[RMDB]
RNA sequence: GGGAACGACUCGAGUAGAGUCGAAAAUCACCAGUUGCUGCAUCACCUGAUCACUGAUGGCUCAACGGUAUCCGGCGGUACAACUGAAUACUUGUAGCUGCCUUUUGAGCGGGUUGGCUGCAAUCCGAAAAGAGGACACACUUCGGUGUGUCCUCAACACACUCAGAUCGUUCGCGAUCUGAGUGUGAAAAGAAACAACAACAACAAC
Reactivity to 2A3 in 0.01 (KOAc 150mM, MgCl2 10mM, bicine 150mM(pH8.5), 24C), signal-to-noise 2, nucleotides 027 to 156: u060c010a030c060c020a000g000u000u000g010c050u030g050c010a050u060c030a050c000c030u020g010a030u020c060a010c010u020g020a060u110g200g040c040u040c060a050a060c050g000g000u020a060u020c020c040g020g000c050g010g050u050a060c040a030a010c090u140g010a150a030u070a160c030u020u090g010u040a010g000c010u010g000c020c000u040u040u030u090g040a020g040c050g000g000g030u110u230g040g010c030u020g000c050a010a030u000c030c000g030a000a050a080a150g010a000g000g000a010c010a000c000a000c010u040u140c210g070g010u000g010u000g000u000c000c000u000c000a010a000